[RMDB]
RNA sequence: GGGAACGACUCGAGUAGAGUCGAAAAUCAAAUAAACGGCACCUAUAAGGUGGUGCCGAACCAGCGUGACCUAGGUACACGCAACGAGCAGUCUCCUAUGACUGCAAAGGUAUCCUAAAUAAAAAAACACACACUUAAGGUUCGCCUUAAGUGUGUGAAAAGAAACAACAACAACAAC
Reactivity to DMS in 0.01 (KOAc 150mM, MgCl2 10mM, bicine 150mM(pH8.5), 24C), signal-to-noise 1, nucleotides 027 to 126: u010c010a110a100a110u000a030a070a200c050g000g000c010a010c000c010u070a290u040a170a100g050g040u000g000g040u000g020c020c000g010a030a000c060c040a120g000c010g090u000g010a030c050c030u000a220g000g020u010a040c000a000c000g000c000a100a010c160g010a240g010c020a020g000u000c050u000c280c130u060a070u010g010a010c000u030g000c010a000a050a050g000g000u010a030u000c060c020u000a040a080a070u110a060a000a050a060a080a090a070
Reactivity to 2A3 in 0.01 (KOAc 150mM, MgCl2 10mM, bicine 150mM(pH8.5), 24C), signal-to-noise 3, nucleotides 027 to 126: u030c000a000a000a080u170a070a100a010c000g010g000c010a000c020c030u110a090u060a300a060g220g050u090g000g000u000g010c000c000g020a000a020c020c010a010g000c000g000u000g020a010c000c090u060a120g110g050u130a080c000a000c000g020c000a020a060c050g050a040g000c000a000g000u000c030u020c060c090u180a110u300g000a010c000u020g000c000a010a030a020g000g010u040a040u030c020c020u110a150a150a090u270a060a090a070a010a000a010a010

Structure probing data (DMS and 2A3) for a 177-nucleotide construct. The reactions ran in a buffer of 150 mM KOAc, 10 mM MgCl2 and 150 mM bicine (pH 8.5), at 24 C. It was measured as part of the RMDB library M2PK90.